[RMDB]
This 207-nucleotide RNA was probed chemically with DMS and 2A3. The data come from the RNA Mapping Database (RMDB), library RSTRND. The RNA was probed in 150 mM KOAc, 10 mM MgCl2 and 150 mM bicine (pH 8.5) at 24 C. The 2A3 profile rests on 3,951 reads.
RNA sequence: GGGAACGACUCGAGUAGAGUCGAAAAGGUGCCAGGACGAGACAUCACUCGGAAGCUGUUGCUCCGAAGCAUUCCGGUUCAGUGGUGCAGUUACAUCGGGGAUAGUCAGAAGUGGCCUUGCGCUUCUGAUGAAACUUUAAAGGAUAAGGCAGGAAUUCGGAAUAUUAUGGUUCGCCAUAAUAUUCCGAAAAGAAACAACAACAACAAC
Reactivity to DMS in 0.01 (KOAc 150mM, MgCl2 10mM, bicine 150mM(pH8.5), 24C), signal-to-noise 1, nucleotides 027 to 156: g030g070u000g010c000c030a080g000g000a110c070g010a200g000a070c000a080u000c040a160c050u000c030g000g020a070a140g020c010u000g030u000u000g000c040u000c020c020g010a010a090g000c060a210u010u010c010c020g000g040u000u000c050a050g030u010g020g010u000g000c040a150g000u020u010a080c090a070u010c030g000g000g000g020a090u000a190g000u000c010a020g020a020a010g040u000g030g000c080c080u040u000g010c010g000c000u000u040c010u010g000a030u000g000a090a060a090c120u010u000u010a090a060a010g040g010a160u000a040a010g030g020c060a120g020g000a070a290u010u040
Reactivity to 2A3 in 0.01 (KOAc 150mM, MgCl2 10mM, bicine 150mM(pH8.5), 24C), signal-to-noise 5, nucleotides 027 to 156: g070g000u040g010c020c020a010g020g040a010c040g010a020g030a060c020a030u020c010a020c070u210c020g000g000a010a010g020c010u030g020u160u230g020c010u030c020c000g020a010a000g000c060a210u030u000c010c010g030g030u150u200c060a010g010u020g020g000u020g020c030a010g030u080u130a060c040a080u020c030g010g000g000g010a010u030a010g010u000c000a020g000a010a000g020u030g050g040c020c010u040u080g020c010g000c000u000u010c000u000g010a010u010g000a000a010a010c020u120u170u210a100a090a030g040g010a040u040a080a040g030g000c030a010g040g070a030a030u040u000